[RMDB]
RNA sequence: GGGAACGACUCGAGUAGAGUCGAAAAAAUAUCCUCAUGUGUUAUAGUAACCCAACUAUCGUAAAUACAUAUACAUAUUAUCGUAAAUUAGUAUAUAAAAUUAUCGUAAAUAGAGGUGGCUAUAGAAAAUGUAAAUAAAAUUCGUUUUAUUUACAUUAAAAGAAACAACAACAACAAC
Reactivity to 2A3 in 0.01 (KOAc 150mM, MgCl2 10mM, bicine 150mM(pH8.5), 24C), signal-to-noise 2, nucleotides 027 to 126: a000a010u120a050u070c020c020u030c020a090u110g090u000g030u090u020a000u010a000g050u020a050a070c050c000c000a070a050c020u030a050u070c010g020u070a020a050a100u200a020c020a060u020a000u040a030c010a010u140a070u240u290a140u190c010g020u010a050a130a080u100u050a080g020u000a070u010a020u060a080a130a080a100u090u020a110u200c010g010u030a040a080a020u070a110g040a060g020g000u010g030g040c000u010a010u000a020g110a010a220
Reactivity to DMS in 0.01 (KOAc 150mM, MgCl2 10mM, bicine 150mM(pH8.5), 24C), signal-to-noise 1, nucleotides 027 to 126: a090a090u000a060u000c010c000u030c120a050u010g060u010g000u000u000a010u000a020g010u000a100a040c030c000c020a110a110c020u020a020u000c030g040u000a060a020a030u020a120c200a010u000a050u000a000c030a210u020a000u000u010a080u080c060g000u040a140a040a050u000u020a300g000u000a010u000a020u000a030a030a050a170u000u000a040u060c000g010u010a070a100a030u050a030g000a100g000g010u000g000g000c010u020a060u000a050g000a040a050